This 177-nucleotide RNA was probed chemically with DMS. Conditions: 150 mM KOAc, 10 mM MgCl2 and 150 mM bicine (pH 8.5), 24 C. Reactivities are rounded to 0.1 and cut off at 0 and 3.
RNA sequence: GGGAACGACUCGAGUAGAGUCGAAAAGAUAUGGAUUCUGGGAGCUACAGGGUCGGAAACGACCCUUUAGCGCGAAACCAGAUCCUAAGUCAAAAGGAUUUACUUACGUUCGCGUAAGUAAAUCCAACGUGAGUUAAAGCUUCGGCUUUAACUCACGAAAAGAAACAACAACAACAAC
Reactivity to DMS in 0.01 (KOAc 150mM, MgCl2 10mM, bicine 150mM(pH8.5), 24C), signal-to-noise 1, nucleotides 027 to 126: g000a020u010a300u020g040g040a020u010u030c000u000g010g000g020a180g030c000u000a010c020a010g000g000g000u000c000g040g000a100a020a150c010g010a010c000c000c020u000u000u000a000g000c010g040c150g000a060a180a260c010c000a020g000a080u000c000c010u000a070a100g000u000c030a060a040a160a110g030g030a020u000u000u000a000c000u000u000a000c000g040u000u020c300g030c000g040u000a000a010g000u010a000a010a000u010c000c000a060a020